The record gives the reactivity of an RNA of 177 nucleotides to 2A3 and DMS.
DMS adducts were read by reverse transcription with MarathonRT.
2A3 adducts were read by reverse transcription with SuperScript II with manganese.
The reactions ran in a buffer of 150 mM KOAc, 10 mM MgCl2 and 150 mM bicine (pH 8.5), at 24 C.
The 2A3 profile rests on 2,400 reads.

RNA sequence: GGGAACGACUCGAGUAGAGUCGAAAAUGUAGCCGUGCGACUACCGUAAUGACUACAGGCGCAUGGCAAAAGCGCUCGCGUUCUUUGUCCAGUAUGGUCUGCGGCGCAUCUGGAUCGCGUUGCAGGGUCGGCCUUUUAAUUUCGAUUAAAAGGCCGAAAAAGAAACAACAACAACAAC
Reactivity to 2A3 in 0.01 (KOAc 150mM, MgCl2 10mM, bicine 150mM(pH8.5), 24C), signal-to-noise 3, nucleotides 027 to 126: u160g040u080a060g010c020c020g010u000g000c000g070a130c030u120a080c030c070g060u170a090a140u240g160a070c070u060a040c080a080g020g000c000g000c020a010u020g020g000c010a080a020a000a000g030c050g000c000u030c050g030c020g050u050u050c000u040u050u050g020u000c030c020a040g050u080a120u140g100g020u000c010u010g030c000g030g000c010g000c010a010u070c080u180g040g060a050u130c090g000c000g040u000u020g020c040a030g050g000g000
Reactivity to DMS in 0.01 (KOAc 150mM, MgCl2 10mM, bicine 150mM(pH8.5), 24C), signal-to-noise 2, nucleotides 027 to 126: u040g000u040a140g020c020c020g070u000g000c030g010a100c040u000a130c190c150g020u030a060a090u030g010a130c100u020a060c040a030g000g000c000g000c030a000u010g000g000c010a010a030a080a120g000c070g020c000u020c070g000c060g000u000u010c010u000u050u010g020u010c050c010a120g000u000a020u010g040g020u000c000u000g010c010g000g010c030g040c040a010u020c090u000g010g000a060u050c120g000c020g020u010u030g000c030a030g010g030g020